[RMDB]
RNA sequence: GGGAACGACUCGAGUAGAGUCGAAAAGAUAUGGAGCUCUUGGACCAAUUGAGCUGUGUGUCGGAAACGACACCAGUAUAUGCUAGAGCUCCUAAGUCAAACGGUGAUCCCUUCGGGGAUCACCGAAGAGAAAUGUUAUGUUCGCAUAACAUUUCUCAAAAGAAACAACAACAACAAC
Reactivity to DMS in 0.01 (KOAc 150mM, MgCl2 10mM, bicine 150mM(pH8.5), 24C), signal-to-noise 4, nucleotides 027 to 126: g000a020u000a020u010g000g010a020g010c000u010c000u010u010g020g010a170c300c150a070a300u000u010g010a230g010c000u000g000u020g010u000g000u000c000g010g000a000a010a040c000g010a000c000a010c000c010a010g000u000a060u000a070u000g020c050u000a010g000a010g010c000u010c000c000u000a000a070g000u000c010a100a130a200c020g010g020u000g000a010u000c000c000c000u010u020c240g040g020g000g010a000u000c000a000c000c000g010a010a040
Reactivity to 2A3 in 0.01 (KOAc 150mM, MgCl2 10mM, bicine 150mM(pH8.5), 24C), signal-to-noise 4, nucleotides 027 to 126: g010a000u010a010u060g000g000a000g000c010u010c050u100u160g160g130a280c140c100a210a300u280u300g090a080g000c000u010g090u010g000u000g000u100c010g000g000a000a000a010c000g000a000c000a000c000c000a010g000u030a240u050a040u300g070c030u020a010g000a000g020c010u000c000c000u000a000a000g010u020c000a070a040a080c020g000g000u000g000a000u000c000c000c000u010u070c230g060g010g000g010a000u000c010a000c000c010g000a020a020
The record gives the reactivity of an RNA of 177 nucleotides to DMS and 2A3. The RNA was probed in 150 mM KOAc, 10 mM MgCl2 and 150 mM bicine (pH 8.5) at 24 C. The 2A3 profile rests on 11,556 reads. Source: RMDB library TTRDEL, as collected in RNAgym. Values cover nucleotides 27 to 126.